The record gives the reactivity of an RNA of 177 nucleotides to DMS.
The DMS profile rests on 740 reads.
Conditions: 150 mM KOAc, 10 mM MgCl2 and 150 mM bicine (pH 8.5), 24 C.
RNA sequence: GGGAACGACUCGAGUAGAGUCGAAAAUCUUAGCGUUUCGACGCUAAGAAAACGUGGUGGAGGAGGUGGAAAGCUCGGCAUUUAAGGGAUAAAAACAUCUUCAUAUAGGGUCGUUCGCGACCCUAAAAGAAUACAUUUGCUUCGGCAAAUGUAUUCUAAAAGAAACAACAACAACAAC
Reactivity to DMS in 0.01 (KOAc 150mM, MgCl2 10mM, bicine 150mM(pH8.5), 24C), signal-to-noise 1, nucleotides 027 to 126: u000c000u010u000a000g030c020g040u000u000u010c160g010a030c000g010c000u000a000a000g000a040a010a040a200c070g010u000g010g030u000g010g030a130g010g010a110g010g000u000g000g010a040a070a090g000c010u000c080g000g040c070a070u010u010u000a060a070g000g000g000a150u010a030a100a020a090a090c180a070u000c050u000u000c110a050u010a160u000a010g000g010g000u000c010g040u000u000c220g000c030g000a010c000c000c000u000a000a040a030

Source: RMDB library M2PK50, as collected in RNAgym. Values cover nucleotides 27 to 126.